The record gives the reactivity of an RNA of 177 nucleotides to 2A3 and DMS. It was measured as part of the RMDB library M2PK50. The DMS profile rests on 3,169 reads. The 2A3 profile rests on 2,915 reads.
[RMDB]
RNA sequence: GGGAACGACUCGAGUAGAGUCGAAAACCUGACACGUUCGCGUGUCAGGAAACGUCGCUCCGAGAAAUACGCUGGGGUCGCGACGGACGCGACGCUAGCGUAAAACGCCCGACUUCGGUCGGGCGAAGUAAAAACCUAAGUUCGCUUAGGUUUUUACAAAAGAAACAACAACAACAAC
Reactivity to 2A3 in 0.01 (KOAc 150mM, MgCl2 10mM, bicine 150mM(pH8.5), 24C), signal-to-noise 2, nucleotides 027 to 126: c000c000u000g000a010c000a000c000g010u050u080c230g010c000g110u000g000u010c000a000g000g020a090a040a000c060g030u030c020g010c030u000c030c010g060a050g060a140a180a020u050a010c010g000c010u000g000g010g000g030u020c000g000c000g020a070c070g110g130a030c020g030c000g000a000c060g070c280u010a000g020c000g000u010a000a010a010a030c000g000c000c030c010g020a020c000u050u060c200g060g000u010c000g000g020g010c000g000a010a000
Reactivity to DMS in 0.01 (KOAc 150mM, MgCl2 10mM, bicine 150mM(pH8.5), 24C), signal-to-noise 3, nucleotides 027 to 126: c000c000u000g010a000c000a010c000g010u010u010c190g020c000g010u010g000u010c000a000g010g000a000a030a060c130g000u010c020g030c020u000c000c010g000a160g000a100a080a180u000a010c030g020c000u000g000g000g000g020u000c010g020c010g010a230c270g020g000a150c010g020c000g010a010c020g000c010u000a020g010c020g020u000a000a010a130a180c020g010c000c000c000g000a020c000u000u010c160g020g010u000c000g010g010g020c000g000a000a030